Record summary:
Structure probing data (2A3) for a 207-nucleotide construct. It was measured as part of the RMDB library OK3TST. For 2A3 the reverse transcriptase was SuperScript II with manganese.
RNA sequence: GGGAACGACUCGAGUAGAGUCGAAAACUUUACAAGUGAGUUCUACCAAAUGGUGAAGAAAUGGAUGUAUCUCACAUCACAGAAAAAUGUAGAAAGCUAUUAACUCGUUUUAGGAGACAAAUAUAUUCACAGUAAAACAACACAAGAAAAGAAAAAAGAAAAUGAGCUGAUUCGUCAGCUCAUUUUCAAAAGAAACAACAACAACAAC
Reactivity to 2A3 in 0.01 (KOAc 150mM, MgCl2 10mM, bicine 150mM(pH8.5), 24C), signal-to-noise 1, nucleotides 027 to 156: c010u100u090u030a040c050a120a030g000u010g010a000g010u030u040c010u010a040c000c010a030a090a110u080g040g010u060g010a080a040g040a020a060a040u040g010g000a000u000g010u080a180u060c140u000c000a030c000a000u070c010a070c050a050g120a040a090a010a030a030u050g000u000a010g030a120a120a000g000c010u020a040u140u020a090a050c020u010c050g030u070u060u030u090a100g040g030a000g010a060c040a000a080a010u150a060u040a070u110u110c030a020c040a030g050u100a050a060a080a030c060a110a020c060a020c060a060a070g070a030a130a000a000g060a000a070a040a250a000a040
Values cover nucleotides 27 to 156.